This 177-nucleotide RNA was probed chemically with DMS and 2A3. Conditions: 150 mM KOAc, 10 mM MgCl2 and 150 mM bicine (pH 8.5), 24 C.
RNA sequence: GGGAACGACUCGAGUAGAGUCGAAAACCUCGGGCGACUCAGGGAUCCGCUCCUGGAAGCGGUGGGUGAGGAGCGGGCGGGAUACGUGCCGAACGUACUCUACAGCUGCGGCUCCCUCCUGCACGAGGAGGGGAACGGAAUUCGUUCCGUUCCCCUCAAAAGAAACAACAACAACAAC
Reactivity to DMS in 0.01 (KOAc 150mM, MgCl2 10mM, bicine 150mM(pH8.5), 24C), signal-to-noise 2, nucleotides 027 to 126: c010c010u000c050g020g000g030c010g000a110c060u000c110a100g030g010g000a050u000c020c030g020c030u000c030c060u000g010g010a120a110g000c060g010g030u000g000g020g000u020g000a160g010g000a050g000c040g000g020g030c050g000g000g000a070u000a030c000g000u010g000c190c160g000a100a070c020g010u000a010c120u000c000u000a100c050a090g030c010u010g000c010g000g000c030u000c010c010c010u000c060c040u000g000c050a120c120g020a070g000
Reactivity to 2A3 in 0.01 (KOAc 150mM, MgCl2 10mM, bicine 150mM(pH8.5), 24C), signal-to-noise 3, nucleotides 027 to 126: c010c020u020c000g050g000g010c040g010a090c040u040c170a050g060g000g030a070u030c000c020g030c040u010c030c010u110g130g060a080a030g020c040g050g020u080g030g030g060u100g010a200g010g050a030g000c000g020g000g010c060g000g000g000a030u040a070c000g020u030g130c070c040g050a040a020c000g020u020a040c050u060c030u110a260c040a110g020c000u300g300c050g020g010c050u000c000c000c010u000c010c020u010g000c040a030c040g010a030g050
Overview: For 2A3 the reverse transcriptase was SuperScript II with manganese.